Chemical mapping of a 207-nucleotide RNA with 2A3. Values cover nucleotides 27 to 156. The reactions ran in a buffer of 150 mM KOAc, 10 mM MgCl2 and 150 mM bicine (pH 8.5), at 24 C.
RNA sequence: GGGAACGACUCGAGUAGAGUCGAAAACGACCCCCUGACGGGUCGGACAUAGCGUCAGGAUCAUCCGUGCCAGUCACCACGGUAAUCAUGUGACUGAUGAUGGUUUUCCAUCUUAAUCUGACUGGGUCGUAGCAGUCUACAGUACUAUGACAUUAGAGCAUACGACGUCAUUCGUGACGUCGUAUGCAAAAGAAACAACAACAACAAC
Reactivity to 2A3 in 0.01 (KOAc 150mM, MgCl2 10mM, bicine 150mM(pH8.5), 24C), signal-to-noise 1, nucleotides 027 to 156: c040g010a010c000c000c000c080c000u010g010a000c000g050g130g030u100c010g000g090a050c050a110u290a020g150c040g000u020c010a000g010g030a080u090c040a060u020c000c000g000u000g090c060c000a000g000u070c000a000c000c010a000c000g030g150u110a040a060u070c040a040u060g000u000g000a000c020u050g000a010u030g000a000u000g000g080u080u170u300u000c030c000a000u000c000u000u060a120a130u100c100u230g030a050c010u000g010g010g010u010c000g000u000a000g070c010a000g000u050c140u140a000c030a060g090u030a060c000u000a000u060g010a000c000a030u020u170a060g070a050